Structure probing data (2A3) for a 207-nucleotide construct. Values cover nucleotides 27 to 156. 2A3 adducts were read by reverse transcription with SuperScript II with manganese. The 2A3 profile rests on 803 reads.
[RMDB]
RNA sequence: GGGAACGACUCGAGUAGAGUCGAAAAGGCGAACGUUCGCGUUCGCCAAAAAGCGUACUACGUAGAGGCUGAAUUUCUGUGAUACUCUCCCAAAUAGGAGAGUGGAGAAACAGCUACCCACCUACGUAUCGCAAAAACGGCUGCUUCGGCAGCCGAAUCACACUCUCUACUUCGGUAGAGAGUGUGAAAAAGAAACAACAACAACAAC
Reactivity to 2A3 in 0.01 (KOAc 150mM, MgCl2 10mM, bicine 150mM(pH8.5), 24C), signal-to-noise 1, nucleotides 027 to 156: g010g000c020g010a000a020c060g050u230u230c300g040c020g090u000u000c000g080c010c040a080a000a000a000a000g020c040g000u070a070c000u020a010c000g000u000a000g000a000g020g020c000u000g120a300a300u040u030u040c010u000g300u030g040a000u040a040c000u040c000u030c000c010c010a180a280a190u170a090g020g000a000g000a000g000u010g000g020a020g000a000a000a000c000a000g020c000u060a090c030c000c010a050c000c000u000a000c030g000u030a050u300c040g000c010a060a060a060a060a060c000g000g030c000u010g000c000u030u100c140g150g020c000a000g000c010c000g000a000a010